Source: RMDB library OK2TST, as collected in RNAgym.
An RNA of 177 nucleotides, treated with DMS and 2A3 and read out base by base.

RNA sequence: GGGAACGACUCGAGUAGAGUCGAAAAUCUGGUAUAAUUUUGUCAGAAUUCAUUCUAGUUUUGGUGAUCCGCCUGGUGAUGUUACUGAAUGGCUUCAGGAGGUGAUGCCCCAGUUAUCCUAACAGUAAGAUAUUCUUUAAUUCGUUAAAGAAUAUCUAAAAGAAACAACAACAACAAC
Reactivity to DMS in 0.01 (KOAc 150mM, MgCl2 10mM, bicine 150mM(pH8.5), 24C), signal-to-noise 7, nucleotides 027 to 126: u000c010u000g010g010u000a060u000a120a110u010u000u000u010g010u000c060a060g000a080a120u000u010c090a050u010u000c030u000a080g010u000u000u010u000g020g010u000g010a110u000c050c050g010c090c030u000g000g020u000g000a050u000g010u000u000a090c100u010g000a100a120u010g010g000c080u000u000c050a040g010g000a130g010g020u000g010a110u000g000c040c040c030c020a050g000u000u000a070u000c020c020u000a070a090c160a090g010u010a090
Reactivity to 2A3 in 0.01 (KOAc 150mM, MgCl2 10mM, bicine 150mM(pH8.5), 24C), signal-to-noise 5, nucleotides 027 to 126: u020c010u010g000g030u060a130u050a240a300u140u180u180u170g030u030c030a030g050a060a070u070u110c040a030u070u010c050u080a090g020u060u070u090u170g050g000u040g020a040u000c010c020g010c040c030u020g030g030u060g030a090u070g030u090u060a060c010u050g080a070a090u070g040g010c030u070u060c020a030g010g060a030g000g050u030g020a030u110g010c010c000c000c000a010g030u040u060a080u070c010c010u030a060a040c010a030g100u110a040

For DMS the reverse transcriptase was MarathonRT. The 2A3 profile rests on 5,158 reads.